Structure probing data (DMS and 2A3) for a 177-nucleotide construct.
For DMS the reverse transcriptase was MarathonRT.
The reactions ran in a buffer of 150 mM KOAc, 10 mM MgCl2 and 150 mM bicine (pH 8.5), at 24 C.
The 2A3 profile rests on 1,595 reads.
RNA sequence: GGGAACGACUCGAGUAGAGUCGAAAACAUCUGUCUAAUUGCUCUGGCCAGUGUUCCAAGCACUAUGUUAAAUAGAAGUGGUGAAAGAGGGCAUCCCUGUCUUGUUCCAGUUUUUAGAGGGAAUGCCUCUGUGACAAUCAUUCGUGAUUGUCACAGAAAAAGAAACAACAACAACAAC
Reactivity to DMS in 0.01 (KOAc 150mM, MgCl2 10mM, bicine 150mM(pH8.5), 24C), signal-to-noise 4, nucleotides 027 to 126: c080a050u000c060u000g010u000c030u000a050a110u000u000g010c050u010c070u000g010g000c090c060a080g000u010g010u000u010c030c040a090a160g020c050a130c070u000a060u000g010u000u000a050a110a080u020a040g010a090a100g020u000g010g020u010g010a070a080a080g010a080g010g000g000c020a020u000c010c010c020u010g000u000c050u020u000g000u000u000c040c030a150g010u010u000u010u000u000a120g010a170g000g010g000a050a030u000g010c000c010
Reactivity to 2A3 in 0.01 (KOAc 150mM, MgCl2 10mM, bicine 150mM(pH8.5), 24C), signal-to-noise 1, nucleotides 027 to 126: c010a070u080c010u070g070u010c040u090a070a130u040u070g030c010u000c020u050g030g000c050c010a070g010u010g020u120u040c020c020a030a040g000c010a010c000u060a060u120g100u140u220a120a220a130u090a090g100a170a030g060u040g090g020u040g090a080a030a030g110a100g060g040g050c000a010u010c000c000c030u040g150u040c040u070u070g060u120u040c020c010a070g010u060u020u000u120u240a090g010a020g050g000g000a060a060u000g020c010c000